The data come from the RNA Mapping Database (RMDB), library M2RFOK. The record gives the reactivity of an RNA of 207 nucleotides to 2A3 and DMS. For 2A3 the reverse transcriptase was SuperScript II with manganese.

RNA sequence: GGGAACGACUCGAGUAGAGUCGAAAAACUAAUCCAAAGCAAGUAUAGGAGAACAGGUUUUUAACUAUUUUUAGGCAGAUAAAGAAUAGUAUUUGACAGUCUAACACUAACUGAACAAUAAGUGUUAAAAACUCCCUCCUGUUCGCAGGAGGGAGAAUCUACACAUAAUCUUCGGAUUAUGUGUAGAAAAAGAAACAACAACAACAAC
Reactivity to 2A3 in 0.01 (KOAc 150mM, MgCl2 10mM, bicine 150mM(pH8.5), 24C), signal-to-noise 2, nucleotides 027 to 156: a000c030u070a070a010u050c000c000a000a010a020g010c000a000a010g000u020a020u050a090g020g010a030g030a100a090c160a160g040g020u050u000u000u000u020a040a000c000u000a000u020u010u000u000u020a010g030g020c050a010g040a040u030a030a030a010g060a060a000u000a000g000u000a030u020u020u020g010a000c000a000g000u000c000u010a000a000c000a000c000u010a020a000c000u000g010a010a000c000a000a000u010a000a000g000u000g010u020u030a010a050a020a020a010c010u000c010c000c000u000c000c000u020g020u060u070c200g010c090a000g000g020a000g000g020g000a000g000a000a000
Reactivity to DMS in 0.01 (KOAc 150mM, MgCl2 10mM, bicine 150mM(pH8.5), 24C), signal-to-noise 1, nucleotides 027 to 156: a190c060u000a090a300u000c020c000a090a090a300g000c020a040a140g020u000a120u010a150g000g020a070g000a100a170c080a100g000g010u000u000u000u000u000a050a060c000u000a020u000u000u030u000u000a020g020g020c030a090g000a150u020a020a020a050g000a050a000u000a020g030u000a110u010u000u010g010a130c040a040g010u030c030u000a040a020c000a020c000u000a050a050c020u000g000a110a180c300a030a080u000a000a020g020u010g070u000u020a040a060a040a100a090c020u000c000c000c000u000c010c010u000g020u000u010c290g020c000a020g020g000a050g000g000g010a000g020a000a000